[RMDB]
RNA sequence: GGGAACGACUCGAGUAGAGUCGAAAAUGAAUGAGUGGAAUUCAGAGAAAUGAGGGUUCUUUGAAGGUGCAACAAAGCACAGAGACACUUAGUUGGUUCAGUCUCCUGAGAGAGCAGAGAAGGGAAAGGCUUCAUGCUCACCGUGAUGGUAGGUGAACACGUAGCGUGGGUUCGCCCACGCUACGUGAAAAGAAACAACAACAACAAC
Reactivity to 2A3 in 0.01 (KOAc 150mM, MgCl2 10mM, bicine 150mM(pH8.5), 24C), signal-to-noise 2, nucleotides 027 to 156: u170g060a050a020u040g000a000g050u040g010g080a020a150u080u030c030a050g020a000g010a090a030a080u120g000a080g070g000g020u030u020c000u020u030u030g040a060a000g010g020u010g000c000a100a090c020a160a280a000g030c020a000c010a040g060a000g010a010c000a000c080u030u030a020g050u100u030g020g020u000u040c050a040g010u010c030u010c010c050u080g010a040g010a010g000a010g090c040a000g080a010g000a030a040g020g030g090a120a070a030g070g010c020u040u020c010a010u070g010c000u010c020a020c010c060g030u090g060a060u160g030g040u080a070g010g000u040g010a000a000